[RMDB]
RNA sequence: GGGAACGACUCGAGUAGAGUCGAAAACGCUGACUUAGCUGAGCGGCUCGGUUAUCGCGACACCUUCACUGAAGGGCGCGAUGAAAUGGCGUGGAUCAAACAUAUUUAUCAGGAGUGCGGUGUCGCAGCACUGCGGUCAGUUCGCUGACCGCAGUGCAAAAGAAACAACAACAACAAC
Reactivity to 2A3 in 0.01 (KOAc 150mM, MgCl2 10mM, bicine 150mM(pH8.5), 24C), signal-to-noise 1, nucleotides 027 to 126: c040g000c020u020g020a060c010u030u090a010g010c010u030g090a020g020c070g010g060c020u000c010g010g020u010u140a050u090c040g050c030g090a060c000a300c010c000u100u080c140a210c290u130g020a070a060g020g010g000c000g000c000g030a070u090g010a030a060a000u140g060g030c000g010u090g050g050a040u100c130a030a050a130c020a030u190a120u280u250u050a120u090c040a010g000g050a050g070u060g000c030g070g110u040g000u080c020g000c060a000
Reactivity to DMS in 0.01 (KOAc 150mM, MgCl2 10mM, bicine 150mM(pH8.5), 24C), signal-to-noise 1, nucleotides 027 to 126: c120g010c050u010g010a070c020u000u000a150g030c090u000g000a140g000c150g050g000c000u000c070g000g000u020u020a040u000c040g000c000g010a080c010a050c000c000u000u020c070a160c150u020g010a010a030g000g050g000c020g010c040g000a010u000g000a040a120a090u000g000g000c030g040u000g000g010a270u000c140a140a060a120c110a020u000a120u030u000u000a100u010c070a090g000g000a020g000u000g060c300g000g000u020g010u000c070g090c070a060